[RMDB]
RNA sequence: GGGAACGACUCGAGUAGAGUCGAAAAGAUAUGGACACGAGGUGCAUAGGCAACAGCUAGGCUCGGAAACGAGCCUAGACAUGCCUCCACCCGUGUCCUAAGUCAAAUCGCUUGUUCGCAAGCGAAAUCGUGCGAUUAAGUUCGCUUAAUCGCACGAAAAAGAAACAACAACAACAAC
Reactivity to 2A3 in 0.01 (KOAc 150mM, MgCl2 10mM, bicine 150mM(pH8.5), 24C), signal-to-noise 2, nucleotides 027 to 126: g020a030u080a020u210g000g010a010c010a000c010g260a300g030g040u030g000c080a130u160a240g010g000c070a060a040c030a230g050c020u030a000g000g030c010u000c010g000g040a090a070a000c020g000a010g020c030c000u000a000g000a010c000a000u020g020c000c000u010c010c000a000c000c000c000g000u010g050u000c000c000u000a010a010g010u000c040a000a030a150u080c020g010c000u020u020g070u160u180c300g000c200a000a010g000c030g000a060a020a010
Reactivity to DMS in 0.01 (KOAc 150mM, MgCl2 10mM, bicine 150mM(pH8.5), 24C), signal-to-noise 2, nucleotides 027 to 126: g000a080u010a300u020g000g000a000c000a030c010g010a220g010g040u000g020c300a220u020a220g010g000c050a070a090c200a230g020c020u000a020g010g020c000u000c010g000g000a110a130a250c000g000a000g020c020c000u000a000g000a010c160a160u000g000c010c000u000c300c010a000c000c000c000g000u000g000u010c010c000u020a020a080g040u000c040a040a110a150u010c000g040c010u000u000g000u000u000c210g000c000a020a000g000c000g010a000a040a110
About this RNA: The data come from the RNA Mapping Database (RMDB), library TTRDES. This 177-nucleotide RNA was probed chemically with 2A3 and DMS. Conditions: 150 mM KOAc, 10 mM MgCl2 and 150 mM bicine (pH 8.5), 24 C. For DMS, 1,186 sequencing reads were counted.